The data come from the RNA Mapping Database (RMDB), library M2RFPK.
The record gives the reactivity of an RNA of 207 nucleotides to 2A3.
The reactions ran in a buffer of 150 mM KOAc, 10 mM MgCl2 and 150 mM bicine (pH 8.5), at 24 C.
The 2A3 profile rests on 1,219 reads.
Reactivities are given for positions 27 through 156.
For 2A3 the reverse transcriptase was SuperScript II with manganese.
RNA sequence: GGGAACGACUCGAGUAGAGUCGAAAAGCACCUUUGCGCUUUUUUUUCGGAUUAGGCGUGGAGGCGAAAGUCACCCUCCUCGCAUCGCAAGUUCGUGCUUGCGACUUACACGUAGGGCGAGGGGUGGAAAACAGUAUGGGAUUCGUCCCAUACUGAACGUCCUUGGAAGAUUCGUCUUCCAAGGACGAAAAGAAACAACAACAACAAC
Reactivity to 2A3 in 0.01 (KOAc 150mM, MgCl2 10mM, bicine 150mM(pH8.5), 24C), signal-to-noise 2, nucleotides 027 to 156: g090c020a060c010c010u000u020u020g010c000g030c000u020u040u010u020u000u000u030u110c160g110g050a040u030u020a010g010g000c000g010u020g000g020a000g020g000c080g080a150a020a010g080u060c060a040c020c010c000u010c000c000u000c010g000c010a000u000c000g000c010a000a010g000u180u300c130g160u300g110c000u010u000g000c000g010a020c010u070u100a040c080a020c120g210u150a080g060g150g000c000g000a000g040g010g000g010u190g000g100a040a060a050a060c010a010g000u000a010u000g030g000g000a000u020u070c170g040u070c050c010c010a000u000a000c000u000g000a010a000